[RMDB]
RNA sequence: GGGAACGACUCGAGUAGAGUCGAAAAGUAGUCAUCUUCGGAUGACUACAAAAACCGUAGGUUCGCUACACUUAAGUGAAUAUUGGGUUCGAAAGAGCCCAUAUUCUAAAGUGACGGCGAACCUAAACGGAAAAAACAUCUGCUUCGGCAGAUGUAACCUCUGUAAUCUCUUCGGAGAUUACAGAGGAAAAGAAACAACAACAACAAC
Reactivity to 2A3 in 0.01 (KOAc 150mM, MgCl2 10mM, bicine 150mM(pH8.5), 24C), signal-to-noise 2, nucleotides 027 to 156: g000u000a000g000u000c000a000u040c000u000u100c300g070g010a000u000g000a000c000u010a000c000a020a000a000a010a000c030c000g010u010a010g000g000u000u000c000g020c010u060a030c030a000c000u100u050a180a170g080u120g090a000a000u010a040u140u260g000g000g010u030u000c020g070a140a100a060g000a020g000c000c000c000a000u000a000u000u000c000u000a000a050a040g000u000g270a300c170g020g020c000g000a000a000c000c000u000a000a010a000c000g000g050a000a010a020a250a000a000c000a000u070c000u000g000c040u040u010c150g170g010c000a000g010a010u020g020u050a020a030

The data come from the RNA Mapping Database (RMDB), library RNAMAK. The record gives the reactivity of an RNA of 207 nucleotides to 2A3. For 2A3, 1,063 sequencing reads were counted. 2A3 adducts were read by reverse transcription with SuperScript II with manganese.